[RMDB]
RNA sequence: GGGAACGACUCGAGUAGAGUCGAAAAGACGUGGAGGUCUCGCGCCCUCCUUUGCGCGUAAGUACGUCGAAAUUCGGUGCUUUGGAUCGCACCGUGUGAUCCAUUAGAUAUCCGCUAUGUGCCGCGGUUGGGCAUUUACACUUACCCGAAAGGGGAAAGGUAUAUGACCUUUCGAGGUCAUAUACCUAAAAGAAACAACAACAACAAC
Reactivity to 2A3 in 0.01 (KOAc 150mM, MgCl2 10mM, bicine 150mM(pH8.5), 24C), signal-to-noise 2, nucleotides 027 to 156: g000a000c050g000u070g040g100a110g070g080u020c030u080c110g020c050g040c040c010c050u160c050c020u080u250u050g010c010g000c010g030u040a040a040g020u040a040c040g010u030c040g050a080a030a020u080u070c010g000g000u020g000c030u090u050u080g030g050a030u020c040g000c020a140c190c080g020u060g010u030g020a010u030c000c030a020u040u020a030g110a130u090a040u120c010c010g000c040u040a000u200g040u030g010c010c020g120c080g080g000u050u100g050g000g000c020a010u080u010u050a040c100a010c020u070u130a090c000c000c020g010a030a040a010g000g020g000g000a030a140
Reactivity to DMS in 0.01 (KOAc 150mM, MgCl2 10mM, bicine 150mM(pH8.5), 24C), signal-to-noise 1, nucleotides 027 to 156: g000a070c060g010u000g010g030a050g010g020u020c020u000c090g030c060g020c160c060c030u000c040c000u010u010u030g010c020g010c060g010u000a120a080g030u010a060c030g010u010c030g000a090a090a180u010u010c040g030g000u010g000c010u020u000u000g010g000a040u000c050g020c020a190c090c160g000u000g070u010g000a020u000c000c040a060u000u010a060g020a140u000a060u000c010c000g030c120u000a030u000g020u010g030c010c070g040c010g000g020u010u000g020g020g040c040a080u010u020u000a070c100a050c130u010u000a180c000c000c010g020a080a050a140g000g000g000g000a060a110
Chemical mapping of a 207-nucleotide RNA with 2A3 and DMS. For DMS, 3,137 sequencing reads were counted. The RNA was probed in 150 mM KOAc, 10 mM MgCl2 and 150 mM bicine (pH 8.5) at 24 C.